[RMDB]
RNA sequence: GGGAACGACUCGAGUAGAGUCGAAAAGAUAUGGAAUUACGCAGAGCGAGGGAGCUCGGAAACGAGCUCCUCCCCACCGAACUACUCUGGUAAUUCCUAAGUCAAAAUCUAACGUUCGCGUUAGAAAGUAAAGUGUAUCGUUCGCGAUACACUUUACAAAAGAAACAACAACAACAAC
Reactivity to DMS in 0.01 (KOAc 150mM, MgCl2 10mM, bicine 150mM(pH8.5), 24C), signal-to-noise 2, nucleotides 027 to 126: g000a020u000a050u000g000g010a010a000u000u000a000c000g030c010a000g000a010g050c150g020a100g010g010g000a000g050c000u000c000g030g010a010a010a050c010g000a000g000c000u000c000c000u000c010c030c130c130a110c170c080g020a080a080c230u020a250c000u000c000u000g010g000u000a000a000u000u000c000c000u000a000a060g000u000c000a180a070a120a090u000c000u010a000a000c000g020u000u020c240g010c000g030u000u000a030g000a030a100a170
Reactivity to 2A3 in 0.01 (KOAc 150mM, MgCl2 10mM, bicine 150mM(pH8.5), 24C), signal-to-noise 1, nucleotides 027 to 126: g010a000u030a020u060g010g040a010a010u020u010a030c100g000c300a010g010a040g140c130g040a050g060g040g000a020g000c000u010c000g000g050a000a030a010c000g010a000g030c000u020c020c000u040c010c040c010c020a110c000c100g030a120a080c130u210a070c000u230c010u000g010g010u000a010a000u000u000c000c000u000a010a010g020u000c010a000a000a000a300u040c000u000a000a010c000g020u070u020c300g010c060g080u020u000a020g000a090a050a020